[RMDB]
RNA sequence: GGGAACGACUCGAGUAGAGUCGAAAAGAUAUGGAUCCGACUUGUCAGCUACGUCGGAAACGACAGUAGCUUGGAUUUAGUCCGGAUCCUAAGUCAAAAGCCUCGAGUUCUUCGGAACUCGAGGCAACUAUAUUAGCGAGUUCGCUCGCUAAUAUAGAAAAGAAACAACAACAACAAC
Reactivity to DMS in 0.01 (KOAc 150mM, MgCl2 10mM, bicine 150mM(pH8.5), 24C), signal-to-noise 3, nucleotides 027 to 126: g010a020u010a300u000g010g000a010u000c000c010g000a050c000u010u000g000u000c000a030g010c000u000a010c000g000u000c000g010g000a060a060a130c000g000a020c010a070g040u000a010g010c010u000u010g020g010a020u000u010u000a010g010u010c090c100g040g010a010u000c000c000u000a000a100g020u000c030a130a110a120a130g010c000c000u000c000g010a030g010u000u000c000u000u010c190g020g010a020a000c010u000c000g010a000g020g010c000a010a000
Reactivity to 2A3 in 0.01 (KOAc 150mM, MgCl2 10mM, bicine 150mM(pH8.5), 24C), signal-to-noise 3, nucleotides 027 to 126: g000a000u070a030u120g000g010a010u050c000c010g010a010c010u030u050g070u170c030a010g000c000u010a000c010g000u010c000g020g040a030a030a000c010g000a010c110a130g010u000a020g110c000u020u150g100g010a060u240u200u270a010g020u110c250c150g000g000a000u000c000c000u010a010a000g040u000c010a060a080a090a090g010c000c020u000c010g020a010g010u000u050c020u090u190c290g090g020a000a000c000u000c020g000a000g000g000c010a000a000
Chemical mapping of a 177-nucleotide RNA with DMS and 2A3. The RNA was probed in 150 mM KOAc, 10 mM MgCl2 and 150 mM bicine (pH 8.5) at 24 C. It was measured as part of the RMDB library TTRDEL. 2A3 adducts were read by reverse transcription with SuperScript II with manganese.